[RMDB]
RNA sequence: GGGAACGACUCGAGUAGAGUCGAAAAAGUCACCUAUUACGAUAGGUGACAUUUGAACCAGCGAACAAUUCAGUUGCGAGAUUCGAGGUUUCAGUCUGAAGCAUAGUAGCCAUUACGAUGGCUACAACUCACUCCCGACUGUUCGCAGUCGGGAGAACAUGAUAUAGCCGUUCGCGGCUAUAUCAUGAAAAGAAACAACAACAACAAC
Reactivity to DMS in 0.01 (KOAc 150mM, MgCl2 10mM, bicine 150mM(pH8.5), 24C), signal-to-noise 2, nucleotides 027 to 156: a130g000u000c020a020c000c000u010a030u000u010a240c270g020a050u020a000g030g050u010g020a010c000a000u010u000u020g010a150a210c030c000a130g030c030g000a020a050c070a180a100u000u000c080a040g000u000u000g040c000g030a070g000a090u000u000c030g020a270g000g010u000u000u010c010a090g020u020c070u000g000a100a030g020c120a120u000a120g040u000a010g000c000c010a020u000u000a150c250g060a110u000g010g050c000u000a000c000a030a010c020u000c070a100c010u000c000c000c020g000a010c000u010g000u000u000c210g080c060a030g010u010c010g020g010g000a010g000a020a030
Reactivity to 2A3 in 0.01 (KOAc 150mM, MgCl2 10mM, bicine 150mM(pH8.5), 24C), signal-to-noise 4, nucleotides 027 to 156: a000g000u000c010a010c040c000u010a000u030u080a060c240g050a020u010a010g000g000u000g000a000c000a000u000u020u080g020a020a010c000c000a010g200c000g000a010a010c010a100a300u020u000c000a000g000u000u000g000c000g000a000g000a000u000u000c000g000a030g050g060u150u300u300c050a050g140u090c000u010g000a010a000g010c060a080u130a190g010u000a000g000c000c000a010u020u070a070c220g130a020u020g000g000c000u000a000c000a000a010c010u100c060a070c010u000c000c000c000g010a000c000u010g030u060u130c220g000c110a000g000u000c020g000g000g000a000g010a000a000